Structure probing data (DMS and 2A3) for a 177-nucleotide construct.
[RMDB]
RNA sequence: GGGAACGACUCGAGUAGAGUCGAAAAUGCACUGGCUAAAACCGGUAAAUACGACGCGGUGAUUGCGCUGGGUACGGUUAUUCGUGGUGGCACUGCCCACUUUGAAUAUGUCGCUGGUGGUGCAAGCGCUAACCCAGUCGUUCGCGACUGGGUUAGCAAAAGAAACAACAACAACAAC
Reactivity to DMS in 0.01 (KOAc 150mM, MgCl2 10mM, bicine 150mM(pH8.5), 24C), signal-to-noise 1, nucleotides 027 to 126: u010g000c050a030c080u000g070g020c020u010a060a120a130a110c070c000g000g010u000a060a070a060u000a090c110g000a110c050g000c010g050g000u000g000a130u000u000g000c050g020c000u000g000g000g000u000a060c090g010g000u000u000a030u000u000c010g000u000g020g060u010g040g000c050a130c160u010g030c190c000c000a010c020u000u010u050g010a030a050u000a050u040g000u000c160g000c040u010g000g010u000g000g000u000g000c040a070a050g000c150
Reactivity to 2A3 in 0.01 (KOAc 150mM, MgCl2 10mM, bicine 150mM(pH8.5), 24C), signal-to-noise 1, nucleotides 027 to 126: u090g000c070a010c040u090g070g000c040u050a000a080a090a040c000c010g030g070u060a040a090a070u230a040c050g000a030c050g040c000g010g050u030g080a130u050u300g080c020g000c050u030g000g110g080u090a040c010g020g050u060u030a020u020u060c020g010u010g020g030u020g000g050c070a060c300u130g000c050c020c000a040c020u090u080u030g000a030a010u020a020u070g050u050c070g000c100u020g000g080u040g060g010u030g030c010a040a000g040c030
The data come from the RNA Mapping Database (RMDB), library OK2TRN. Reactivities are given for positions 27 through 126. The 2A3 profile rests on 982 reads. Conditions: 150 mM KOAc, 10 mM MgCl2 and 150 mM bicine (pH 8.5), 24 C.